[RMDB]
Structure probing data (2A3 and DMS) for a 207-nucleotide construct.
The DMS profile rests on 4,371 reads.
RNA sequence: GGGAACGACUCGAGUAGAGUCGAAAACAAAGAAAGAACAGAAUCAUUGCUCCAUGCAAAAACAUGGACAAAUCUCAAAAACAUCAUGCCAAACAGAGGAAGUCAGACACAAAUUUGUACAUGUUUCCAAUUUCAUUUCUAUGAAAGUGUGGGCAAAAGUAAAUAGUCCAUUCGUGGACUAUUUACUAAAAGAAACAACAACAACAAC
Reactivity to 2A3 in 0.01 (KOAc 150mM, MgCl2 10mM, bicine 150mM(pH8.5), 24C), signal-to-noise 6, nucleotides 027 to 156: c040a010a120a030g150a060a110a020g080a080a030c070a040g100a110a090u140c060a100u060u080g010c060u020c030c000a010u010g000c040a070a050a020a100a040c000a010u010g000g010a000c020a010a020a020u080c070u030c040a050a110a050a040a050c030a050u130c030a030u130g040c020c010a050a090a080c040a080g050a020g070g040a030a020g050u080c040a030g050a090c030a010c030a080a150a110u080u090u090g050u050a030c020a070u030g010u020u020u020c020c000a030a020u010u000u010c000a010u070u210u180c120u300a040u040g010a010a020a030g020u040g010u110g070g000g010c020a070a050a060
Reactivity to DMS in 0.01 (KOAc 150mM, MgCl2 10mM, bicine 150mM(pH8.5), 24C), signal-to-noise 3, nucleotides 027 to 156: c040a070a120a170g020a140a070a100g020a090a180c010a130g010a090a150u020c070a190u010u000g010c090u000c000c010a030u000g020c040a120a090a100a110a090c000a010u000g000g010a040c010a020a020a090u000c070u020c050a030a060a080a100a060c060a120u000c030a080u010g010c020c030a060a060a110c050a120g010a100g010g010a070a070g000u010c050a050g000a070c100a060c050a060a000a060u000u000u000g020u000a050c020a070u000g000u000u000u000c000c030a050a090u000u010u000c000a030u000u000u000c120u050a090u030g000a020a010a030g000u000g020u000g010g000g000c100a020a050a080
The 2A3 profile rests on 3,894 reads. It was measured as part of the RMDB library OK3TST. The RNA was probed in 150 mM KOAc, 10 mM MgCl2 and 150 mM bicine (pH 8.5) at 24 C.